[RMDB]
RNA sequence: GGGAACGACUCGAGUAGAGUCGAAAAAGUAUAUCCUAUGGGAAUCCCCGUCCUCCCGUCACGUCCAGCCCCUCCCCGUGUCUAGUGAAGGGGGACUCCGGAACUCCUUGCAUGUUAGGGACGAAGCAUAUCCCUCUGUUCGCAGAGGGAAAAAGAAACAACAACAACAAC
Reactivity to 2A3 in 0.01 (KOAc 150mM, MgCl2 10mM, bicine 150mM(pH8.5), 24C), signal-to-noise 4, nucleotides 027 to 129: a000g190u100a100u020a020u140c010c030u030a110u110g060g000g020a010a050u020c000c010c010c030g030u060c010c000u050c000c000c000g060u030c030a020c050g010u030c030c040a020g030c030c000c000c000u020c030c010c000c000g040u050g040u000c050u060a040g050u030g090a020a020g000g000g030g000g010a010c010u040c020c000g040g020a030a020c000u020c010c000u020u050g060c040a040u060g030u060u070a040g000g000g000a000c010g000a040a000g030c040a070u060a080
Reactivity to DMS in 0.01 (KOAc 150mM, MgCl2 10mM, bicine 150mM(pH8.5), 24C), signal-to-noise 7, nucleotides 027 to 129: a130g000u010a000u000a040u010c020c010u000a050u040g020g040g000a060a070u030c040c020c000c030g000u020c000c010u050c020c000c050g020u030c090a090c090g000u040c040c090a120g000c020c010c010c010u000c000c010c000c030g050u050g050u020c060u000a080g030u000g050a090a070g020g020g040g000g000a090c040u030c070c010g000g000a030a060c070u010c020c030u020u010g030c040a070u000g050u070u020a090g000g000g000a070c050g030a080a100g030c120a100u040a180

Annotation: This 170-nucleotide RNA was probed chemically with 2A3 and DMS. The 2A3 profile rests on 9,097 reads. The reactions ran in a buffer of 150 mM KOAc, 10 mM MgCl2 and 150 mM bicine (pH 8.5), at 24 C. The data come from the RNA Mapping Database (RMDB), library 15KLIB.